An RNA of 177 nucleotides, treated with DMS and 2A3 and read out base by base. The reactions ran in a buffer of 150 mM KOAc, 10 mM MgCl2 and 150 mM bicine (pH 8.5), at 24 C. DMS adducts were read by reverse transcription with MarathonRT. Values are in units of 0.01, from 0 to 300, in steps of 10. The 2A3 profile rests on 1,555 reads.

RNA sequence: GGGAACGACUCGAGUAGAGUCGAAAAUGCCUUGAGCUUGGCCUUGAGGUCAUCGGUAAGGGCUUUCUCGUUGCGAAUGCCCUCAAGCACAUCCUUGUGCUCGGUGCGAAGCGAAGCGAGAAGGCCAGACCCUAUCCUCGUUCGCGAGGAUAGGGUCAAAAGAAACAACAACAACAAC
Reactivity to DMS in 0.01 (KOAc 150mM, MgCl2 10mM, bicine 150mM(pH8.5), 24C), signal-to-noise 1, nucleotides 027 to 126: u010g010c020c000u000u000g030a020g010c080u020u000g010g050c190c000u000u000g020a020g000g000u000c080a090u020c080g000g000u000a100a090g020g010g040c000u000u000u020c000u000c040g000u010u000g000c010g010a060a190u000g000c000c000c040u000c110a100a050g030c000a000c000a010u000c270c270u000u000g040u000g010c000u000c060g030g010u020g010c020g010a180a070g020c010g000a130a050g000c020g000a030g000a060a020g010g000c020c050a030
Reactivity to 2A3 in 0.01 (KOAc 150mM, MgCl2 10mM, bicine 150mM(pH8.5), 24C), signal-to-noise 2, nucleotides 027 to 126: u090g000c010c000u000u030g030a050g000c090u220u230g080g050c000c030u000u030g030a020g040g110u110c010a040u050c080g080g020u140a090a060g100g000g000c000u000u010u000c000u000c000g020u030u040g010c010g040a120a010u070g010c010c000c020u030c010a010a020g040c000a000c000a060u200c080c090u110u210g010u010g000c010u000c000g040g000u190g030c040g040a050a020g010c020g030a070a010g000c030g020a000g000a040a020g020g000c000c000a000